The data come from the RNA Mapping Database (RMDB), library 15KREP. Structure probing data (DMS and 2A3) for a 177-nucleotide construct. Reactivities are given for positions 27 through 126. The reactions ran in a buffer of 150 mM KOAc, 10 mM MgCl2 and 150 mM bicine (pH 8.5), at 24 C.

RNA sequence: GGGAACGACUCGAGUAGAGUCGAAAACGAGACGCUGGAGACGCCCGGGAACAAGGAAAUAGAACAAGGUACGGUAGAAAAGAGCGAGCCUCCCGAUACGAGUUUGCCAGGACCUAUCAAGUUUGGACAUUAAAGGUAUCUUCGGAUACCUUUAAUGAAAAGAAACAACAACAACAAC
Reactivity to DMS in 0.01 (KOAc 150mM, MgCl2 10mM, bicine 150mM(pH8.5), 24C), signal-to-noise 4, nucleotides 027 to 126: c060g010a100g010a070c070g010c050u000g000g010a120g000a120c120g020c050c000c050g020g000g000a050a050c090a060a070g000g000a060a060a100u010a070g000a070a090c080a070a090g010g010u000a060c070g020g000u000a070g000a080a060a050a080g000a090g020c030g010a070g010c040c030u000c020c020c030g010a080u010a070c120g000a090g020u000u000u000g000c040c040a090g010g000a040c040c020u000a060u000c080a020a140g010u000u000u000g010g000a280
Reactivity to 2A3 in 0.01 (KOAc 150mM, MgCl2 10mM, bicine 150mM(pH8.5), 24C), signal-to-noise 2, nucleotides 027 to 126: c020g000a020g040a060c040g000c070u050g030g050a010g010a030c000g030c010c030c010g010g000g020a040a050c050a040a000g030g030a070a060a060u140a080g050a060a000c030a040a020g060g000u070a040c060g000g090u060a020g110a060a120a010a000g050a020g030c020g020a010g020c020c000u030c010c010c020g010a010u020a070c030g000a040g050u000u040u090g030c020c000a020g010g010a020c000c000u060a050u130c020a040a060g010u000u070u070g030g020a030